[RMDB]
RNA sequence: GGGAACGACUCGAGUAGAGUCGAAAAGAAAGAAAGAAAACCGUGUGGAAAAGAAUGGCUAUAACCACUGAAACCUGAGGAAACAGGAAGCCACAACGCAAGCCAUGUGGUUAGCACACGGAAGAAAAUACGGAUCAUGGUUCGCCAUGAUCCGUAUAAAAGAAACAACAACAACAAC
Reactivity to DMS in 0.01 (KOAc 150mM, MgCl2 10mM, bicine 150mM(pH8.5), 24C), signal-to-noise 2, nucleotides 027 to 126: g030a030a070a080g010a070a110a130g020a170a270a170a070c060c000g040u110g030u000g000g000a120a030a010a040g020a040a020u000g000g000c000u000a050u010a080a130c150c070a100c080u010g010a060a100a060c030c010u010g010a140g000g020a140a100a120c050a000g000g000a030a090g010c050c030a080c250a090a050c250g000c190a120a040g000c040c020a030u000g010u000g000g000u000u000a040g000c040a000c000a020c000g000g000a060a020g000a070a100a060
Reactivity to 2A3 in 0.01 (KOAc 150mM, MgCl2 10mM, bicine 150mM(pH8.5), 24C), signal-to-noise 2, nucleotides 027 to 126: g110a030a040a000g170a020a090a000g080a050a140a020a050c010c000g020u030g000u000g110g110a090a040a070a070g070a150a170u210g000g000c000u050a020u030a300a020c050c030a010c090u080g050a090a100a000c000c000u030g000a030g000g300a040a060a000c010a000g000g060a020a000g050c030c020a070c030a100a080c100g030c100a080a000g040c030c010a020u010g000u000g010g110u070u010a010g020c000a000c000a000c000g000g040a000a030g010a000a040a000
The data come from the RNA Mapping Database (RMDB), library OK1LIB. This 177-nucleotide RNA was probed chemically with DMS and 2A3. DMS adducts were read by reverse transcription with MarathonRT. The 2A3 profile rests on 1,066 reads.